This 177-nucleotide RNA was probed chemically with 2A3 and DMS. It was measured as part of the RMDB library OK2TST. 2A3 adducts were read by reverse transcription with SuperScript II with manganese. The 2A3 profile rests on 2,835 reads. Conditions: 150 mM KOAc, 10 mM MgCl2 and 150 mM bicine (pH 8.5), 24 C.
RNA sequence: GGGAACGACUCGAGUAGAGUCGAAAACUCACCAAAACCGGGAACACUACGCAGACGGUGAGCAUGGAUCAUCUUCAACAAGGUCUGCAGCCGCGUGCAGAUCUCUUUGGCGAUUUUAAGCGGCGCAACUAGUGAGCGUAUUCGUACGCUCACUAGUAAAAGAAACAACAACAACAAC
Reactivity to 2A3 in 0.01 (KOAc 150mM, MgCl2 10mM, bicine 150mM(pH8.5), 24C), signal-to-noise 3, nucleotides 027 to 126: c000u010c020a070c000c020a070a030a010a080c060c040g050g000g060a190a020c050a060c140u300a080c070g010c010a010g030a070c010g010g000u020g040a020g020c030a100u140g080g080a040u050c030a040u020c040u150u070c000a060a080c010a030a020g010g010u000c010u010g010c000a030g000c000c000g000c010g050u020g000c000a010g000a050u000c020u040c020u070u120u160g050g000c040g150a160u040u010u090u220a100a000g000c020g000g000c030g020c040a040
Reactivity to DMS in 0.01 (KOAc 150mM, MgCl2 10mM, bicine 150mM(pH8.5), 24C), signal-to-noise 3, nucleotides 027 to 126: c030u020c010a100c070c060a050a010a200a180c140c040g000g000g000a100a090c180a100c130u000a060c070g010c040a090g030a180c100g000g000u000g010a030g000c070a070u020g010g010a060u010c060a050u000c070u000u000c030a040a060c130a100a030g010g000u000c000u000g000c000a040g010c010c040g000c030g030u000g010c000a000g000a000u000c000u000c120u000u000u010g000g000c110g010a080u000u000u000u000a080a140g000c010g000g010c000g020c290a080